Background
The record gives the reactivity of an RNA of 177 nucleotides to 2A3 and DMS. The data come from the RNA Mapping Database (RMDB), library OK2TST.
RNA sequence: GGGAACGACUCGAGUAGAGUCGAAAAACGGUGUAGGGCGUAUGUUCAUGUACCGAUCCAGUGACACGCACCUGACCAUUACCCACAUCUUUAAAGUUACAUGCUUUCAGAUUCAAUGCCCCACCGGGUGCUAUGUUGACUUCGGUCAACAUAGCACAAAAGAAACAACAACAACAAC
Reactivity to 2A3 in 0.01 (KOAc 150mM, MgCl2 10mM, bicine 150mM(pH8.5), 24C), signal-to-noise 1, nucleotides 027 to 126: a000c020g000g020u070g040u090a040g040g010g060c020g000u100a150u180g080u110u090c000a020u080g010u070a070c010c080g000a020u000c040c050a010g020u030g070a010c000a000c070g000c000a140c090c000u010g010a050c010c010a030u050u110a160c000c000c000a000c040a060u040c000u000u160u130a090a130a060g010u050u080a090c020a060u130g000c040u000u000u130c030a020g030a060u000u110c060a040a100u180g030c020c000c030c010a040c010c020g070g040
Reactivity to DMS in 0.01 (KOAc 150mM, MgCl2 10mM, bicine 150mM(pH8.5), 24C), signal-to-noise 2, nucleotides 027 to 126: a080c120g010g000u000g040u010a040g020g000g000c020g050u000a080u020g010u000u010c070a030u000g000u000a260c060c070g010a080u000c050c060a100g020u020g000a060c040a010c110g030c090a050c030c040u000g010a050c050c020a090u010u020a090c030c020c000a110c220a040u000c030u010u000u000a110a100a060g020u010u020a060c210a080u000g000c080u010u000u020c280a050g000a030u020u000c130a120a100u000g000c020c010c000c000a090c100c090g000g000